[RMDB]
RNA sequence: GGGAACGACUCGAGUAGAGUCGAAAAGAUAUGGACGUCUUUGGGAGAGUGCGCAGUCCUUGGAUUUAAUUUCGGAAACGAAAUUUGUCAGGACUGAUGUGCUCGAAGAACAAAGACGUCCUAAGUCGAAUUAAAUGUGGUUCGCCACAUUUAAUUCAAAAGAAACAACAACAACAAC
Reactivity to 2A3 in 0.01 (KOAc 150mM, MgCl2 10mM, bicine 150mM(pH8.5), 24C), signal-to-noise 2, nucleotides 027 to 126: g060a060u170a100u280g000g000a000c000g000u000c000u040u030u000g000g000g000a050g030a010g030u050g000c030g000c020a000g010u010c020c030u080u150g140g000a050u300u300u300a030a010u000u030u000c010g000g000a070a070a060c020g000a000a020a020u000u010u030g020u020c040a040g000g000a010c000u020g150a300u130g010u010g020c000u020c020g000a120a000g000a000a000c010a000a000a010g000a000c000g000u000c000c000u000a000a000g010u010c060
Reactivity to DMS in 0.01 (KOAc 150mM, MgCl2 10mM, bicine 150mM(pH8.5), 24C), signal-to-noise 3, nucleotides 027 to 126: g000a100u000a300u000g000g020a020c000g020u000c000u000u010u000g000g000g010a150g000a020g040u000g030c010g000c020a010g010u000c000c000u010u010g030g000a020u010u010u020a010a010u000u010u000c000g010g010a120a120a270c000g020a010a010a010u000u000u000g010u010c020a040g000g010a020c000u000g010a040u000g060u000g000c010u000c020g010a060a140g000a160a220c000a000a010a010g000a030c000g020u000c010c000u000a010a070g020u010c080